[RMDB]
RNA sequence: GGGAACGACUCGAGUAGAGUCGAAAAAAAUCCACAUAUUCGUUGUGUUUGCACCACAACAAUAUGAGUGGGACACUAUAAUUUAUAAUAAUAGUGCGAAUACUGCGUUUUCUUACAUGGCAUGAGAUUAAAAAGAUACAUUCGUGUAUCUUUUUAAAAAAGAAACAACAACAACAAC
Reactivity to DMS in 0.01 (KOAc 150mM, MgCl2 10mM, bicine 150mM(pH8.5), 24C), signal-to-noise 9, nucleotides 027 to 126: a030a050a060u020c000c000a150c010a030u000a000u000u000c160g010u000u000g010u000g000u010u000u040g000c160a190c300c010a000c000a000a000c000a010a000u000a010u010g000a100g030u010g010g000g000a180c000a000c010u000a010u010a070a050u020u020u040a130u040a140a080u020a110a020u000a010g010u000g010c060g010a140a090u030a070c070u010g010c060g010u010u000u010u000c010u010u000a080c090a060u010g000g000c060a080u010g010a100g000a150
Reactivity to 2A3 in 0.01 (KOAc 150mM, MgCl2 10mM, bicine 150mM(pH8.5), 24C), signal-to-noise 7, nucleotides 027 to 126: a000a000a010u030c000c000a010c000a010u020a010u000u020c080g000u000u000g000u000g010u010u090u120g060c040a020c030c010a000c010a000a000c000a000a000u010a000u010g030a050g060u040g000g010g030a030c010a010c020u010a020u030a150a180u120u170u160a240u100a180a090u190a080a010u010a040g000u010g020c020g040a060a060u080a150c070u070g050c020g020u030u040u080u030c020u060u050a100c040a090u080g080g010c020a020u100g060a060g020a100
Chemical mapping of a 177-nucleotide RNA with DMS and 2A3. For 2A3 the reverse transcriptase was SuperScript II with manganese. The data come from the RNA Mapping Database (RMDB), libraries RFM100 and RFMREP. The reactions ran in a buffer of 150 mM KOAc, 10 mM MgCl2 and 150 mM bicine (pH 8.5), at 24 C.